Chemical mapping of a 177-nucleotide RNA with 2A3 and DMS. The data come from the RNA Mapping Database (RMDB), library OK2TST. Values cover nucleotides 27 to 126. DMS adducts were read by reverse transcription with MarathonRT.

[RMDB]
RNA sequence: GGGAACGACUCGAGUAGAGUCGAAAAAUAAGAGGUUUUUUGCUAUCAAGAGGACAGGAUUUCCAGGACUUGGUGACAUGCUGGAUGUGGGGAGAAGGAGGCACAUAGAAUGGCUCACAUGAAGGCGUACCCCCUAAGAAUUCGUUCUUAGGGGGUAAAAAGAAACAACAACAACAAC
Reactivity to 2A3 in 0.01 (KOAc 150mM, MgCl2 10mM, bicine 150mM(pH8.5), 24C), signal-to-noise 1, nucleotides 027 to 126: a010u180a050a030g030a040g060g000u040u020u010u030u230u180g020c040u060a060u180c010a000a030g010a000g020g010a010c020a030g050g010a120u070u070u010c000c010a000g000g050a040c000u020u030g030g000u040g030a000c000a030u080g010c010u040g020g010a070u070g030u030g050g000g020g000a090g000a080a000g050g000a010g000g080c010a000c040a050u070a030g100a070a040u120g000g000c000u030c010a000c000a040u070g040a030a050g020g040c300g030
Reactivity to DMS in 0.01 (KOAc 150mM, MgCl2 10mM, bicine 150mM(pH8.5), 24C), signal-to-noise 5, nucleotides 027 to 126: a100u010a090a090g010a080g020g010u000u010u000u000u000u010g010c040u000a090u010c070a060a090g000a100g010g010a080c100a070g000g010a110u000u010u000c020c020a070g010g000a080c080u000u010g010g020u000g010a080c080a040u000g000c050u000g000g010a060u000g010u010g010g000g000g010a100g010a060a090g000g000a060g010g020c040a020c080a050u000a060g000a050a270u000g010g020c030u000c040a050c100a050u000g010a090a070g010g000c100g010

The RNA was probed in 150 mM KOAc, 10 mM MgCl2 and 150 mM bicine (pH 8.5) at 24 C.